Chemical mapping of a 177-nucleotide RNA with DMS.
[RMDB]
RNA sequence: GGGAACGACUCGAGUAGAGUCGAAAAGAUAUGGACUUCGAGGGCCAAAACUGUACGAGUCGUGGUGUCGGAAACGACACCGCGACGAUGAGUACAGUUUUGGCCUCCCCACCGAAGUCCUAAGUCACUCUGUAUAUCUCUUCGGAGAUAUACAGAGAAAAGAAACAACAACAACAAC
Reactivity to DMS in 0.01 (KOAc 150mM, MgCl2 10mM, bicine 150mM(pH8.5), 24C), signal-to-noise 3, nucleotides 027 to 126: g020a050u020a300u000g000g010a010c020u010u000c010g020a270g000g000g050c000c000a010a020a010a010c000u000g000u000a020c000g000a240g020u000c010g090u000g010g020u010g010u000c010g000g000a070a030a120c010g050a000c000a030c010c000g000c010g050a000c010g000a040u000g010a300g010u000a000c040a000g010u000u000u000u000g010g000c010c000u000c010c000c000c030a300c140c010g000a030a000g000u000c010c000u010a000a130g020u010c050a180
It was measured as part of the RMDB library TTRINS.
The reactions ran in a buffer of 150 mM KOAc, 10 mM MgCl2 and 150 mM bicine (pH 8.5), at 24 C.